[RMDB]
Source: RMDB library OK1LIB, as collected in RNAgym.
The record gives the reactivity of an RNA of 177 nucleotides to DMS and 2A3.
The 2A3 profile rests on 5,817 reads.
The RNA was probed in 150 mM KOAc, 10 mM MgCl2 and 150 mM bicine (pH 8.5) at 24 C.
Values cover nucleotides 27 to 126.

RNA sequence: GGGAACGACUCGAGUAGAGUCGAAAACGUGAACAUCGCUCUGCUAAGUCCCGUCGUUCUUCCAGUCAGAGCGAGAUUGUAAGCAACCUUAUGCGCAAUGAAGACAUAGAGGGACUUCUGAAAGAAGCACGGUAGGAUGAUUCGUCAUCCUACCGUGAAAAGAAACAACAACAACAAC
Reactivity to DMS in 0.01 (KOAc 150mM, MgCl2 10mM, bicine 150mM(pH8.5), 24C), signal-to-noise 4, nucleotides 027 to 126: c140g010u020g000a080a120c180a130u000c010g010c010u000c000u000g020c070u020a090a070g000u010c060c030c020g020u010c040g000u000u000c000u020u020c020c050a090g010u020c010a000g000a030g010c000g000a040g000a050u010u020g000u000a120a160g040c060a120a110c090c070u030u000a030u010g000c020g000c050a060a050u030g010a060a090g010a070c020a060u030a030g020a040g010g010g010a060c000u000u000c090u000g000a060a050a120g000a080a050g000
Reactivity to 2A3 in 0.01 (KOAc 150mM, MgCl2 10mM, bicine 150mM(pH8.5), 24C), signal-to-noise 6, nucleotides 027 to 126: c080g110u120g110a050a010c010a070u020c000g000c000u010c010u020g060c060u090a050a040g060u040c020c030c010g060u050c020g000u040u030c000u080u030c010c000a050g070u140c010a000g010a000g020c060g000a010g000a030u030u060g020u080a050a060g010c020a020a080c010c030u060u100a060u130g030c050g010c040a030a070u150g050a110a040g050a020c020a080u160a050g140a060g040g000g020a020c000u030u000c040u100g170a160a130a100g060a030a000g030